[RMDB]
Description:
An RNA of 177 nucleotides, treated with 2A3 and DMS and read out base by base. The 2A3 profile rests on 6,798 reads. The reactions ran in a buffer of 150 mM KOAc, 10 mM MgCl2 and 150 mM bicine (pH 8.5), at 24 C. For 2A3 the reverse transcriptase was SuperScript II with manganese. Values cover nucleotides 27 to 126. For DMS, 5,691 sequencing reads were counted.
RNA sequence: GGGAACGACUCGAGUAGAGUCGAAAACAUUUUCUGCAUAACAUUUACCCCUGUGCCUUUAUAGAUUCUCCUGAAUUUAGAUCAACUCAGAUGCACAAAGGUGAAAAAUUCCAGGUCACCAUUAUUGACUCCUCUUAGGAUUCGUCCUAAGAGGAGUAAAAGAAACAACAACAACAAC
Reactivity to 2A3 in 0.01 (KOAc 150mM, MgCl2 10mM, bicine 150mM(pH8.5), 24C), signal-to-noise 8, nucleotides 027 to 126: c020a030u090u110u070u070c050u060g040c050a090u090a160a120c020a070u080u080u190a080c000c000c000c030u020g010u030g040c000c020u110u140u060a140u030a070g100a060u090u030c040u040c030c050u060g030a040a030u070u090u090a120g020a090u070c020a010a060c030u000c080a010g000a080u110g030c020a030c010a070a100a030g060g020u060g080a060a020a000a050a040u130u010c040c000a030g070g000u010c020a010c020c010a040u080u100a100u100u240g050
Reactivity to DMS in 0.01 (KOAc 150mM, MgCl2 10mM, bicine 150mM(pH8.5), 24C), signal-to-noise 4, nucleotides 027 to 126: c070a120u010u010u020u020c030u000g030c040a110u020a110a060c100a090u020u010u020a120c030c010c020c040u000g010u010g020c010c010u010u030u020a090u010a070g000a070u020u000c020u020c070c090u040g010a040a060u010u000u020a020g000a060u020c050a070a060c080u010c050a030g010a070u010g000c060a030c070a050a080a070g000g030u010g000a050a060a060a070a110u010u020c040c000a060g010g010u000c020a030c030c040a100u010u010a070u040u010g010